[RMDB]
RNA sequence: GGGAACGACUCGAGUAGAGUCGAAAAUCCAAAAUCGUUUGGUAAACAUUCAUGACAUUUUGGAUUGGGAUAAUGUUACAGUUCCUUUAAAGGAUACCCUUUGCAUUGUCUGCGGUAGCCAGAAGUUUGUUUCUACAAUUGCCGGACCGAAGGCUGAACCGAUACCACUAUUCGUAGUGGUAUCGGUAAAAGAAACAACAACAACAAC
Reactivity to 2A3 in 0.01 (KOAc 150mM, MgCl2 10mM, bicine 150mM(pH8.5), 24C), signal-to-noise 2, nucleotides 027 to 156: u000c010c010a000a000a040a000u060c050g040u030u010u020g110g020u180a180a200a240c090a090u170u170c020a020u150g060a080c000a050u010u010u000u000g020g000a000u000u080g030g010g010a030u020a060a010u030g050u090u090a040c060a110g030u060u000c040c000u050u210u180a140a150a030g020g000a030u100a150c000c040c000u030u060u100g000c000a030u000u010g020u020c030u110g030c080g060g070u070a080g150c080c030a040g040a150a030g040u060u030u050g000u010u010u030c030u020a080c030a110a170u170u080g010c000c020g030g060a100c050c040g090a120a010g000g000c000u010g010a040